[RMDB]
The record gives the reactivity of an RNA of 177 nucleotides to 2A3 and DMS. Reactivities are rounded to 0.1 and cut off at 0 and 3. 2A3 adducts were read by reverse transcription with SuperScript II with manganese. Conditions: 150 mM KOAc, 10 mM MgCl2 and 150 mM bicine (pH 8.5), 24 C.

RNA sequence: GGGAACGACUCGAGUAGAGUCGAAAAGCAUCGCGCUGUAUCUGAACUUCGACAUGUUGGCGUCGCCGAACCCGGGUUACUUCACCUACGACGGUGACCAGUCGCUGCCGCUAGACGCCCGCGGUCAAGCCGUACCACUGUUCGCAGUGGUACGGCUAAAAGAAACAACAACAACAAC
Reactivity to 2A3 in 0.01 (KOAc 150mM, MgCl2 10mM, bicine 150mM(pH8.5), 24C), signal-to-noise 2, nucleotides 027 to 126: g070c010a020u070c020g000c000g010c080u070g020u010a050u100c050u080g080a120a010c030u090u050c050g080a000c040a070u100g020u110u050g040g010c020g060u080c050g030c010c030g080a120a170c010c000c000g000g030g000u060u090a090c070u090u070c010a020c020c000u100a160c110g160a020c020g000g060u010g020a020c020c000a000g020u030c000g040c080u090g030c020c000g050c030u050a000g000a030c080g010c000c000c000g020c010g020g070u060c050a000
Reactivity to DMS in 0.01 (KOAc 150mM, MgCl2 10mM, bicine 150mM(pH8.5), 24C), signal-to-noise 1, nucleotides 027 to 126: g050c080a080u000c090g010c050g000c000u050g020u000a180u000c000u000g000a230a080c050u030u000c000g000a040c060a140u020g000u000u000g000g000c090g030u000c090g010c030c030g030a080a150c020c020c070g000g050g000u020u000a030c140u000u000c020a090c070c070u000a110c170g000a080c110g000g030u000g000a000c220c190a000g000u000c060g110c080u040g000c070c000g020c000u080a000g000a010c060g000c000c010c000g000c020g000g000u040c090a060